[RMDB]
RNA sequence: GGGAACGACUCGAGUAGAGUCGAAAAAGACGACGUCAGUACGUACGCGUACUGACGUCGUCAAUGUGUGGAGGUAAGGAACUACGUCGUGUUCUCUCUUUCGGUAAAUCCUUUCCUCUCACUGUAACUUCCUCAGAUUAUUCGUAAUCUGAGGAAGAAAAGAAACAACAACAACAAC
Reactivity to DMS in 0.01 (KOAc 150mM, MgCl2 10mM, bicine 150mM(pH8.5), 24C), signal-to-noise 4, nucleotides 027 to 126: a070g010a020c000g020a010c010g010u000c010a000g000u010a020c010g050u010a100c270g030c010g050u000a000c000u020g010a010c010g020u000c010g000u000c000a010a010u010g010u000g010u010g010g000a010g000g020u000a020a010g000g010a020a080c170u010a070c070g000u010c080g010u010g010u010u010c120u020c080u020c090u020u020u010c040g000g000u010a040a090a150u000c000c000u000u000u000c000c000u000c010u000c010a000c010u000g000u010a070a190
Reactivity to 2A3 in 0.01 (KOAc 150mM, MgCl2 10mM, bicine 150mM(pH8.5), 24C), signal-to-noise 6, nucleotides 027 to 126: a010g000a000c000g000a000c010g020u010c010a000g000u000a000c020g030u030a040c270g000c010g090u000a000c010u040g020a000c000g000u000c010g010u000c010a000a000u010g010u000g050u130g040g010a010g020g000u020a000a010g020g020a060a070c070u060a030c130g100u100c060g040u100g150u300u060c100u020c000u030c010u090u140u080c060g040g010u070a050a060a140u020c010c000u010u010u030c000c010u000c000u010c010a010c010u020g070u060a060a100